[RMDB]
RNA sequence: GGGAACGACUCGAGUAGAGUCGAAAAAAGUUGCACCAGGUACGGAUACCAGACGUUGCCAAACAGGGUGACAUGAGGAUCACCCAUGUACUGUCCCUUGGCAGCCGUACCUGCUGCUGGUGAAAAAAGUAAUCAUGAUCUUCGGAUCAUGAUUACUAAAAGAAACAACAACAACAAC
Reactivity to DMS in 0.01 (KOAc 150mM, MgCl2 10mM, bicine 150mM(pH8.5), 24C), signal-to-noise 3, nucleotides 027 to 126: a070a050g000u000u000g020c000a040c100c010a010g010g000u000a010c000g000g010a140u000a120c110c060a100g000a040c170g000u010u000g000c040c040a010a040a070c060a070g000g010g010u000g030a010c050a120u020g020a170g010g010a230u010c020a020c000c000c000a040u000g020u000a070c130u000g000u000c020c030c040u000u000g020g000c000a120g010c000c000g000u000a000c010c010u000g010c220u000g000c000u010g020g020u010g010a000a060a060a080a070
Reactivity to 2A3 in 0.01 (KOAc 150mM, MgCl2 10mM, bicine 150mM(pH8.5), 24C), signal-to-noise 2, nucleotides 027 to 126: a000a010g280u160u060g000c000a010c000c000a010g000g010u010a000c000g000g020a030u020a170c030c020a020g050a080c040g150u170u040g040c020c000a110a040a010c050a050g000g000g000u020g000a020c030a060u240g190a140g180g040a100u040c020a070c010c000c000a000u030g020u010a050c060u110g020u020c010c010c000u000u010g000g000c000a000g010c000c010g010u000a000c000c010u010g010c000u000g000c010u010g000g080u170g080a090a050a020a030a010
Structure probing data (DMS and 2A3) for a 177-nucleotide construct. Conditions: 150 mM KOAc, 10 mM MgCl2 and 150 mM bicine (pH 8.5), 24 C. For DMS the reverse transcriptase was MarathonRT. The 2A3 profile rests on 2,845 reads.